About this RNA
The data come from the RNA Mapping Database (RMDB), library PDB130. The record gives the reactivity of an RNA of 207 nucleotides to 2A3 and DMS. Values cover nucleotides 27 to 156. The DMS profile rests on 1,982 reads. For DMS the reverse transcriptase was MarathonRT. The reactions ran in a buffer of 150 mM KOAc, 10 mM MgCl2 and 150 mM bicine (pH 8.5), at 24 C.
RNA sequence: GGGAACGACUCGAGUAGAGUCGAAAACCAUCAGCUGGUAGGUAGGGUAAGGGCCUACCUAGGCGACGACGGGUGACGGGGGGUGAGAGCCCGGAACCGGAGAGGGAGCCUGAGAAACAGCUCCCACGUCCAAGGACGGCAGCAGGCGCGGAACUUGGUCACUAAUAUGGUUCGCCAUAUUAGUGACAAAAGAAACAACAACAACAAC
Reactivity to 2A3 in 0.01 (KOAc 150mM, MgCl2 10mM, bicine 150mM(pH8.5), 24C), signal-to-noise 4, nucleotides 027 to 156: c010c000a050u110c050a020g040c010u110g090g070u110a020g000g000u010a010g020g010g040u050a050a070g040g020g030c000c000u010a010c000c000u010a010g010g020c010g020a030c030g010a020c030g020g000g040u100g050a030c020g000g010g010g000g000g020u060g030a110g000a000g020c000c000c000g010g000a010a010c000c000g020g010a050g010a040g020g010g000a000g010c040c060u130g050a130g100a090a110a060c040a020g000c010u000c000c010c000a010c020g040u010c010c000a050a020g030g010a020c020g010g020c000a020g010c010a010g030g000c020g000c020g050g020a020a020c030u060u060g030
Reactivity to DMS in 0.01 (KOAc 150mM, MgCl2 10mM, bicine 150mM(pH8.5), 24C), signal-to-noise 1, nucleotides 027 to 156: c000c000a130u000c040a220g040c050u020g020g020u030a050g020g040u020a090g010g000g000u000a150a090g020g030g020c000c010u000a020c010c020u000a080g000g010c000g010a040c030g020a030c020g020g010g020u000g000a130c020g010g050g000g000g050g050u000g010a120g020a220g000c020c020c020g020g020a090a100c020c000g000g000a220g000a100g000g000g050a030g020c010c020u000g000a210g020a080a040a050c070a080g000c000u000c000c010c000a010c070g000u000c050c020a100a170g030g010a040c070g000g000c010a020g010c150a030g030g000c020g020c040g050g020a080a170c020u020u010g010